[RMDB]
RNA sequence: GGGAACGACUCGAGUAGAGUCGAAAACUCUGACAUCAUCCUAGCGUAUAUGCGCGGGACGAAUCUCUGCUACAGGCAGCAGCGCGACCGCUUCCUAACCGAAAGAAUCCUAGCCUCAGACGUACAUGGUACGCUGACAGCUAUCGGGAUGAACAAGCUUCCCCUUUCUGUUCGCAGAAAGGGGAAGAAAAGAAACAACAACAACAAC
Reactivity to 2A3 in 0.01 (KOAc 150mM, MgCl2 10mM, bicine 150mM(pH8.5), 24C), signal-to-noise 1, nucleotides 027 to 156: c060u000c050u060g070a090c040a150u080c000a010u000c030c050u070a160g010c070g130u150a160u040a030u300g040c050g030c000g040g030g000a000c010g050a010a000u040c030u070c020u040g030c000u050a070c090a070g130g000c010a030g000c030a010g010c010g010c070g080a040c020c000g040c000u020u060c040c000u030a160a130c000c080g090a150a020a020g080a000a110u070c000c000u010a010g010c010c010u110c000a190g010a300c030g000u000a000c030a220u200g200g040u050a000c020g000c010u010g060a000c070a010g010c000u050a010u200c100g000g000g000a000u010g030a080a010c040a000a090g000